[RMDB]
Chemical mapping of a 177-nucleotide RNA with 2A3 and DMS.
Reactivities are given for positions 27 through 126.
DMS (dimethyl sulfate) methylates the pairing face of unpaired adenines and cytosines.
It was measured as part of the RMDB library TTRDEL.
For 2A3 the reverse transcriptase was SuperScript II with manganese.
For DMS the reverse transcriptase was MarathonRT.
RNA sequence: GGGAACGACUCGAGUAGAGUCGAAAAGAUAUGGAGGGAGUACGACGAUCACCUACUCGGAAACGAGUAGGGUGGGAGUAUCUCCUAAGUCAAAAGACGUAGAUACAGUUCGCUGUAUCUACGUCAACCUAUAAUACAUCUUCGGAUGUAUUAUAGGAAAAGAAACAACAACAACAAC
Reactivity to 2A3 in 0.01 (KOAc 150mM, MgCl2 10mM, bicine 150mM(pH8.5), 24C), signal-to-noise 9, nucleotides 027 to 126: g060a050u220a090u290g150g050a140g060g040g020a040g030u020a020c070g170a040c030g020a230u050c030a040c080c000u000a000c000u000c000g030g020a090a070a050c010g000a000g010u010a030g040g040g010u010g000g000g000a020g010u010a020u060c020u000c000c000u010a080a020g040u040c030a000a010a060a190g010a000c000g000u010a000g000a000u010a000c010a000g050u080u130c210g080c180u000g000u000a000u000c000u000a000c000g000u000c000a000a000
Reactivity to DMS in 0.01 (KOAc 150mM, MgCl2 10mM, bicine 150mM(pH8.5), 24C), signal-to-noise 9, nucleotides 027 to 126: g010a080u000a110u010g000g020a270g010g000g000a070g020u000a020c050g010a120c130g010a140u010c020a060c000c000u000a000c000u000c000g000g000a090a100a170c000g010a010g010u000a010g010g000g020u010g000g000g010a150g010u000a020u010c010u000c000c000u000a040a090g010u010c060a070a060a150a090g010a010c000g010u000a000g000a010u000a000c000a000g000u000u010c230g010c000u000g000u000a000u000c000u000a000c000g000u000c000a010a050